Structure probing data (2A3 and DMS) for a 177-nucleotide construct.
2A3 adducts were read by reverse transcription with SuperScript II with manganese.
Conditions: 150 mM KOAc, 10 mM MgCl2 and 150 mM bicine (pH 8.5), 24 C.
For 2A3, 1,563 sequencing reads were counted.

RNA sequence: GGGAACGACUCGAGUAGAGUCGAAAAGUACCAGCCUAGGAUCCUUAUAUUCUUCUAAGAAGCACAAAUGCAUGGGUCCGGCGACGAAUGUAAUGGACCUAGAAGUAGCGUUAUCAGUAUCCUGCGACCUCCAGUACAGGUUCGCCUGUACUGGAGGAAAAGAAACAACAACAACAAC
Reactivity to 2A3 in 0.01 (KOAc 150mM, MgCl2 10mM, bicine 150mM(pH8.5), 24C), signal-to-noise 2, nucleotides 027 to 126: g010u030a050c040c020a010g090c000c020u050a070g000g030a190u000c010c000u010u010a010u000a010u170u000c010u030u000c010u110a160a020g040a100a050g100c070a070c000a150a180a110u300g000c070a080u050g040g000g080u010c020c000g010g000c010g010a000c020g060a030a030u130g020u110a000a100u150g000g020a000c000c000u000a030g000a090a020g040u100a020g060c050g060u050u020a060u080c040a030g050u020a050u050c000c000u030g020c020g050a080
Reactivity to DMS in 0.01 (KOAc 150mM, MgCl2 10mM, bicine 150mM(pH8.5), 24C), signal-to-noise 1, nucleotides 027 to 126: g000u000a100c050c010a150g000c030c040u000a070g000g020a100u000c030c040u000u000a030u000a020u000u000c000u000u000c020u020a210a150g010a050a080g010c140a050c110a060a070a100u000g020c080a070u000g020g000g020u000c020c000g010g040c230g000a040c030g000a030a020u000g000u000a030a080u040g000g020a040c000c000u000a000g000a130a070g020u010a020g000c100g000u000u000a080u000c050a040g020u000a060u020c080c020u000g010c110g000a140